[RMDB]
The record gives the reactivity of an RNA of 177 nucleotides to DMS and 2A3.
RNA sequence: GGGAACGACUCGAGUAGAGUCGAAAAGAGCGUCGAGAGACGAAGAGAAGUGCACCGAUCAGCAAUGGGGAACGUAAUGGUGCACAAGAGUAAGUCAGUGUAACGUUCUCUGGGCACUGGAGGCAGAACUAUGGCGCGGAUUCGUCCGCGCCAUAGUAAAAGAAACAACAACAACAAC
Reactivity to DMS in 0.01 (KOAc 150mM, MgCl2 10mM, bicine 150mM(pH8.5), 24C), signal-to-noise 1, nucleotides 027 to 126: g030a030g070c000g000u000c050g000a190g050a190g000a080c020g000a130a030g000a150g000a110a070g020u020g000c000a030c090c010g010a200u050c150a050g000c150a030a120u000g000g000g030g000a080a030c080g000u000a050a130u010g010g030u000g000c000a010c000a030a020g000a110g010u040a130a170g000u000c070a010g030u000g000u000a110a130c010g000u000u000c000u000c000u010g000g020g000c000a020c010u000g000g010a030g000g000c000a130g040a080
Reactivity to 2A3 in 0.01 (KOAc 150mM, MgCl2 10mM, bicine 150mM(pH8.5), 24C), signal-to-noise 2, nucleotides 027 to 126: g130a000g010c020g000u030c020g040a070g000a000g100a100c080g040a050a000g050a040g010a250a030g010u000g000c000a010c050c030g100a160u140c100a010g010c030a060a260u160g010g010g000g000a000a030c000g000u120a030a000u020g030g000u000g010c000a000c010a000a000g030a010g050u280a220a000g040u040c060a000g080u020g040u120a020a020c000g070u030u000c000u020c000u000g020g000g050c040a010c000u000g020g000a010g000g070c040a040g010a100

The RNA was probed in 150 mM KOAc, 10 mM MgCl2 and 150 mM bicine (pH 8.5) at 24 C. For 2A3 the reverse transcriptase was SuperScript II with manganese. It was measured as part of the RMDB library OK1LIB.